[RMDB]
RNA sequence: GGGAACGACUCGAGUAGAGUCGAAAAAGCCCCCAGAACCCGGUCGCUCCCUUCCCGCUAAAUCCCCUUCGGGGUCAGUGCGCUACCAGCACAGGGCCGCACGCCUCUCCUGCUAGCCGUGUGGCUCAUCGGACUGAUAGUUCGCUAUCAGUCCGAUAAAAGAAACAACAACAACAAC
Reactivity to DMS in 0.01 (KOAc 150mM, MgCl2 10mM, bicine 150mM(pH8.5), 24C), signal-to-noise 2, nucleotides 027 to 126: a210g040c040c010c030c080c040a140g020a110a100c070c100c000g000g040u000c110g030c020u010c000c020c000u010u000c010c000c000g000c120u020a010a090a110u010c040c000c000c040u010u030c110g030g030g000g110u010c120a060g010u000g000c060g020c110u040a130c070c070a130g010c090a080c130a160g010g000g000c030c000g020c030a010c010g000c100c030u000c030u040c020c010u010g010c070u000a030g000c140c000g000u030g050u000g020g020c000u000c050
Reactivity to 2A3 in 0.01 (KOAc 150mM, MgCl2 10mM, bicine 150mM(pH8.5), 24C), signal-to-noise 2, nucleotides 027 to 126: a030g060c040c000c000c000c010a020g040a110a040c010c010c030g020g020u070c030g000c030u020c010c000c010u020u010c020c020c000g000c000u050a090a090a080u090c000c000c000c030u070u080c080g030g000g000g000u050c040a050g010u030g040c030g020c040u120a110c000c040a010g000c000a010c000a050g020g000g000c000c000g000c000a010c010g030c020c000u000c030u030c030c020u060g040c050u070a020g000c050c000g010u010g020u050g010g000c000u000c010